[RMDB]
RNA sequence: GGGAACGACUCGAGUAGAGUCGAAAACUCAAGGCCUUCGGGCCUUGAGAAAAGGCAUCGUAUCUUUGCUACGAAGCCAAACAUGAAACAUGAAAGCAGAGAAAAGUUUUGGGUUCGCCCAAAACAACUUCCUUAUAGAGUUCGCUCUAUAAGGAAGAAAAGAAACAACAACAACAAC
Reactivity to DMS in 0.01 (KOAc 150mM, MgCl2 10mM, bicine 150mM(pH8.5), 24C), signal-to-noise 4, nucleotides 027 to 126: c010u000c000a000a010g000g010c000c040u000u010c170g040g010g040c000c000u000u000g000a000g000a030a050a100a150g010g020c020a240u010c010g010u000a040u010c010u000u010u000g000c000u000a020c010g010a030a060g010c000c010a060a070a110c150a080u000g000a090a120a090c150a110u010g010a060a030a050g010c010a010g000a030g000a210a100a110a120g000u000u000u000u000g010g000g010u010u000c260g030c010c000c000a010a010a000a010c010a110a140
Reactivity to 2A3 in 0.01 (KOAc 150mM, MgCl2 10mM, bicine 150mM(pH8.5), 24C), signal-to-noise 7, nucleotides 027 to 126: c000u000c000a000a000g010g010c000c060u140u210c300g080g000g000c010c000u010u000g000a000g000a000a030a000a000g010g000c000a020u010c010g000u020a040u080c010u010u020u030g000c010u000a010c000g000a040a010g010c010c010a040a050a000c090a060u190g090a100a080a020c040a030u150g100a110a050a010g000c010a000g010a010g020a060a060a040a070g000u000u000u010u010g020g020g020u030u070c200g090c000c000c010a010a000a000a000c000a000a010